Source: RMDB library TTRDEL, as collected in RNAgym. This 177-nucleotide RNA was probed chemically with 2A3 and DMS. Values are in units of 0.01, from 0 to 300, in steps of 10. High 2A3 reactivity points to a flexible backbone, as in loops and unpaired stretches. The reactions ran in a buffer of 150 mM KOAc, 10 mM MgCl2 and 150 mM bicine (pH 8.5), at 24 C.
RNA sequence: GGGAACGACUCGAGUAGAGUCGAAAAGAUAUGGAGGAGGCUUUUGACGGUUGCACCAUCGGAAACGAUGGAAUAACCGAUAAGCCUCUCCUAAGUCAAAAGCUGGUGUAGUUCGCUACACCAGCAACAUUCAGCAAUGCUUCGGCAUUGCUGAAUGAAAAGAAACAACAACAACAAC
Reactivity to 2A3 in 0.01 (KOAc 150mM, MgCl2 10mM, bicine 150mM(pH8.5), 24C), signal-to-noise 1, nucleotides 027 to 126: g010a020u070a050u230g000g000a060g150g170a050g030g000c050u150u120u120u230g290a130c080g020g000u040u020g040c110a050c040c010a000u010c020g010g000a090a080a040c030g000a000u000g000g010a000a000u050a010a000c000c010g000a010u000a000a000g000c000c000u000c000u000c000c000u030a030a000g000u000c030a220a100a010a100g000c000u010g050g010u000g000u020a010g000u020u140c280g010c090u010a000c010a000c000c010a000g000c000a010a000
Reactivity to DMS in 0.01 (KOAc 150mM, MgCl2 10mM, bicine 150mM(pH8.5), 24C), signal-to-noise 2, nucleotides 027 to 126: g010a030u000a300u000g010g010a040g000g010a050g000g000c000u000u000u000u020g020a130c100g020g010u000u000g020c300a200c010c000a000u000c000g010g000a070a060a160c010g020a000u000g000g000a010a070u000a020a010c000c000g000a070u000a000a010g000c000c000u000c000u000c000c000u000a070a190g000u010c040a090a070a110a140g000c000u000g000g020u010g020u000a000g000u010u020c180g020c010u000a000c000a000c000c000a000g010c000a010a020